[RMDB]
RNA sequence: GGGAACGACUCGAGUAGAGUCGAAAACCUUCAGAAGAUUUUAUAAAGCACGUCCGCACUAAUGGUGGUUACAAUUCUUGGCAUUUAGUCGAGGGUGAACUAUUGGUGCAAGACUUACGCUUAAAUAUGGCGGUUGCCUUCGGGCAACCGAAAAGAAACAACAACAACAAC
Reactivity to 2A3 in 0.01 (KOAc 150mM, MgCl2 10mM, bicine 150mM(pH8.5), 24C), signal-to-noise 2, nucleotides 027 to 129: c000c000u000u160c050a110g100a150a000g000a040u060u020u070u030a090u020a030a000a080g030c020a020c000g000u040c000c000g000c000a000c000u000a000a000u040g000g000u040g030g020u020u050a140c060a070a050u000u040c060u000u000g000g000c040a100u180u000u120a030g000u010c000g000a000g020g040g000u000g040a040a000c040u000a000u000u000g000g030u000g000c010a000a000g000a000c000u030u040a000c050g040c040u000u000a020a120a030u160a040u040g150g000
Reactivity to DMS in 0.01 (KOAc 150mM, MgCl2 10mM, bicine 150mM(pH8.5), 24C), signal-to-noise 3, nucleotides 027 to 129: c030c010u110u010c060a040g010a150a120g000a150u020u030u020u050a200u000a000a020a000g030c030a110c220g010u020c040c070g060c000a000c000u000a000a000u000g000g020u050g010g010u030u110a060c190a010a040u040u020c000u020u000g020g010c050a210u050u120u060a070g070u030c000g030a020g030g010g000u010g000a080a030c000u030a010u000u010g000g000u040g050c060a000a170g000a030c020u040u070a150c040g030c000u030u080a120a120a030u040a070u030g030g040
Chemical mapping of a 170-nucleotide RNA with 2A3 and DMS. Values cover nucleotides 27 to 129.